[RMDB]
RNA sequence: GGGAACGACUCGAGUAGAGUCGAAAAGAUAUGGACGAGAACUACUUCUAUGAUGGCUUGCCUAAGACAGACAUUCGGAAACGAAUGUUCGAGGCAAGCCAUCAAUAAUGAAGCUCGUCCUAAGUCAGGUAUUUAGAAGGUUCGCCUUCUAAAUACCAAAAGAAACAACAACAACAAC
Reactivity to DMS in 0.01 (KOAc 150mM, MgCl2 10mM, bicine 150mM(pH8.5), 24C), signal-to-noise 3, nucleotides 027 to 126: g040a040u010a300u010g010g010a010c000g000a010g000a120a170c150u010a300c010u000u000c010u010a100u000g000a010u000g000g000c000u010u000g000c000c000u060a240a120g010a090c300a150g000a010c010a010u000u000c000g000g000a080a070a100c000g000a010a010u000g010u000u010c020g000a030g030g000c000a000a000g000c000c000a010u010c000a000a130u010a080a050u000g000a020a040g020c010u000c000g010u000c000c000u000a020a060g000u000c050a130

Chemical mapping of a 177-nucleotide RNA with DMS. The reactions ran in a buffer of 150 mM KOAc, 10 mM MgCl2 and 150 mM bicine (pH 8.5), at 24 C. Values cover nucleotides 27 to 126. The data come from the RNA Mapping Database (RMDB), library TTRINS. DMS (dimethyl sulfate) methylates the pairing face of unpaired adenines and cytosines.